[RMDB]
RNA sequence: GGGAACGACUCGAGUAGAGUCGAAAACAUAUCAAAAUUGAUCUGAAGACAAAUCAGAUGGAGUGCUUCUUUAAAUUGCAAGGAUAUAAAGCCUGCAGCAAUUAUGCUUCAGAAGACCAGGUAAUAACACCCUACAUAGGUUCGCCUAUGUAGGGUGAAAAGAAACAACAACAACAAC
Reactivity to DMS in 0.01 (KOAc 150mM, MgCl2 10mM, bicine 150mM(pH8.5), 24C), signal-to-noise 2, nucleotides 027 to 126: c100a130u010a050u010c100a050a090a060a130u020u000g000a050u000c010u010g010a040a100g010a140c120a080a140a060u000c040a010g010a090u000g050g020a090g010u020g000c010u010u000c050u000u000u000a130a060a030u010u000g030c000a160a060g020g030a100u010a040u010a090a160a170g000c050c030u000g010c160a050g000c010a060a040u010u000a130u000g000c020u000u000c030a020g000a070a080g000a100c030c040a100g010g000u000a030a040u000a030a140
Reactivity to 2A3 in 0.01 (KOAc 150mM, MgCl2 10mM, bicine 150mM(pH8.5), 24C), signal-to-noise 1, nucleotides 027 to 126: c020a010u090a060u150c080a030a000a060a130u010u200g020a020u000c010u010g030a000a010g160a140c030a050a140a070u040c030a000g060a070u030g030g030a050g060u110g040c060u090u000c000u030u210u040a090a110a030u020u020g010c010a000a040g020g040a000u040a040u110a300a170a040g030c000c000u050g000c020a020g020c000a000a040u090u040a080u140g000c000u030u090c010a040g010a050a000g010a040c020c020a000g220g010u120a060a050u210a160a000
The data come from the RNA Mapping Database (RMDB), library OK2TST. The record gives the reactivity of an RNA of 177 nucleotides to DMS and 2A3. For DMS, 849 sequencing reads were counted. Values cover nucleotides 27 to 126. The RNA was probed in 150 mM KOAc, 10 mM MgCl2 and 150 mM bicine (pH 8.5) at 24 C.